RNA sequence: GGGAACGACUCGAGUAGAGUCGAAAAGAUCACUAACCAAAUAUGUUUAGUAGAAUUUAUUAACCAGGGUUGAAACUCAGGAUCUCCACAGACUUGUUCUUUCCACUACACCACCAGUUUUUCCAGAUCCAAAUUGAACUGCAAUCUGUAUUUGGUCCUCCAUGUAACAUUUCGAUGUUACAUGGAGAAAAGAAACAACAACAACAAC
Reactivity to 2A3 in 0.01 (KOAc 150mM, MgCl2 10mM, bicine 150mM(pH8.5), 24C), signal-to-noise 2, nucleotides 027 to 156: g010a060u130c030a030c050u060a020a010c020c040a040a090a150u230a120u190g020u060u070u060a020g010u020a050g030a190a130u120u160u120a150u180u300a080a050c070c030a020g040g000g060u040u050g080a110a040a010c020u040c050a020g040g000a080u030c050u000c060c030a080c000a010g050a050c000u070u030g040u140u010c040u030u070u000c020c000a030c010u060a020c100a050c050c010a010c000c040a050g050u030u000u000u090u110c000c000a010g000a050u000c000c000a050a050a110u080u050g030a070a030c060u090g000c040a000a110u070c040u050g040u110a040u030u060u020g030g000u060c010